[RMDB]
RNA sequence: GGGAACGACUCGAGUAGAGUCGAAAACGUGCCAUGUUCGCAUGGCACGAAAUAAAGGAAACAGGAACGCAUCGGCGCACGAUGUAACAAGCGCAAAAUAAAAAACAUUUCACUUCGGUGAAAUGAACUUCUUAUACCACUUCGGUGGUAUAAGAAGAAAAGAAACAACAACAACAAC
Reactivity to 2A3 in 0.01 (KOAc 150mM, MgCl2 10mM, bicine 150mM(pH8.5), 24C), signal-to-noise 3, nucleotides 027 to 126: c000g000u000g000c000c010a000u010g020u070u050c200g020c120a010u000g000g000c010a000c000g000a000a000a000u140a030a070a020g110g020a020a070a030c050a070g080g070a060a020c050g000c050a010u030c020g030g000c030g020c050a070c080g010a020u040g040u190a020a050c070a110a030g000c030g010c060a000a040a100a010u250a030a120a020a010a000a010c000a000u000u000u000c010a010c000u010u050c210g110g000u000g000a010a010a000u010g000a000a000
Reactivity to DMS in 0.01 (KOAc 150mM, MgCl2 10mM, bicine 150mM(pH8.5), 24C), signal-to-noise 2, nucleotides 027 to 126: c040g020u010g000c020c000a000u000g010u020u030c210g010c020a010u010g010g000c020a000c000g010a040a050a030u010a060a060a090g000g010a060a060a060c060a050g010g010a060a090c150g020c020a020u000c000g010g010c060g030c090a080c040g020a060u000g000u010a040a100c100a080a200g010c040g030c080a110a060a060a060u050a030a090a060a100a060a160c000a010u000u000u000c000a000c000u000u010c100g030g010u000g010a000a010a000u000g000a030a070
Chemical mapping of a 177-nucleotide RNA with 2A3 and DMS. 2A3 is a SHAPE reagent: it acylates the 2'-hydroxyl of flexible nucleotides of all four kinds. The DMS profile rests on 1,677 reads. For 2A3, 4,109 sequencing reads were counted. It was measured as part of the RMDB library M2PK50.